[RMDB]
RNA sequence: GGGAACGACUCGAGUAGAGUCGAAAAGAUAUGGAUCUCAUCCAGAACUACAAGGCACGCGAGGGUCGGAAACGACCCUCGUCUUGCUGGAGUGAGAUCCUAAGUCAAACCUGUCUUCGGACAGGAAGUCUUAUACCGAGUUCGCUCGGUAUAAGACAAAAGAAACAACAACAACAAC
Reactivity to 2A3 in 0.01 (KOAc 150mM, MgCl2 10mM, bicine 150mM(pH8.5), 24C), signal-to-noise 2, nucleotides 027 to 126: g020a030u070a050u230g010g000a000u000c010u020c000a010u020c010c020a000g040a150a090c160u300a090c120a080a010g000g020c120a010c230g120c060g010a000g000g000g020u020c020g000g050a130a050a020c020g010a010c000c040c000u010c000g000u010c010u010u030g020c000u000g000g020a100g230u180g000a000g000a010u000c000c000u000a030a020g010u000c030a010a050a160c000c010u000g000u000c000u030u100c300g150g010a000c000a010g010g000a020a020
Reactivity to DMS in 0.01 (KOAc 150mM, MgCl2 10mM, bicine 150mM(pH8.5), 24C), signal-to-noise 3, nucleotides 027 to 126: g000a020u010a300u000g010g000a020u000c000u010c000a150u010c000c020a020g000a100a030c110u040a300c050a050a000g010g000c100a160c300g030c110g040a010g000g010g010u000c000g000g000a090a080a210c010g030a020c010c000c000u000c000g000u010c000u010u000g010c000u000g000g000a030g000u010g010a000g000a020u000c000c000u000a010a110g010u010c040a080a100a150c000c000u000g000u000c000u020u000c270g050g000a030c000a000g010g000a030a050